[RMDB]
RNA sequence: GGGAACGACUCGAGUAGAGUCGAAAACGCACUCGCAGCUUAAUAACCUGCGCUGAGCCCUUCUCCCCCAGCUUGCCUGUGUCCUAGGGAAUUGGAAGGUCAUCCUUCACAGGAUCGUGUCGAAGUCAUUACUCGUGAGUGUUCGCACUCACGAGAAUCUACUCUACAAGUUCGCUUGUAGAGUAGAAAAAGAAACAACAACAACAAC
Reactivity to 2A3 in 0.01 (KOAc 150mM, MgCl2 10mM, bicine 150mM(pH8.5), 24C), signal-to-noise 2, nucleotides 027 to 156: c020g000c000a020c010u010c000g010c000a010g000c020u040u050a040a020u070a080a010c000c010u000g050c030g040c260u060g050a040g020c010c000c000u070u070c090u060c040c000c000c000c000a010g020c020u020u080g010c020c010u060g000u000g010u060c000c030u080a040g000g030g010a060a080u080u080g050g020a070a010g060g010u090c050a100u110c050c020u000u080c010a000c000a060g000g040a060u080c020g010u030g070u170c030g040a060a010g020u080c050a150u090u100a050c010u000c010g010u010g020a030g010u000g030u050u030c030g040c110a000c000u000c000a000c000g010a000g000a000a000
Reactivity to DMS in 0.01 (KOAc 150mM, MgCl2 10mM, bicine 150mM(pH8.5), 24C), signal-to-noise 2, nucleotides 027 to 156: c080g000c020a090c060u000c000g060c070a020g020c040u000u000a150a120u000a140a080c300c000u010g000c000g040c110u000g010a100g000c030c020c060u010u000c040u000c020c000c000c030c020a100g000c020u000u020g010c000c020u010g050u010g010u000c040c030u000a140g000g020g000a080a140u000u000g000g030a050a080g030g020u000c090a090u010c030c050u010u000c080a140c080a060g000g010a020u000c100g020u000g010u020c030g000a090a210g000u000c010a040u000u000a060c000u010c000g010u010g010a040g040u000g040u000u010c230g030c030a030c000u000c000a010c000g020a030g020a030a060
An RNA of 207 nucleotides, treated with 2A3 and DMS and read out base by base. 2A3 adducts were read by reverse transcription with SuperScript II with manganese. Values are in units of 0.01, from 0 to 300, in steps of 10. For DMS, 3,999 sequencing reads were counted. The data come from the RNA Mapping Database (RMDB), library M2RFPK. The 2A3 profile rests on 963 reads.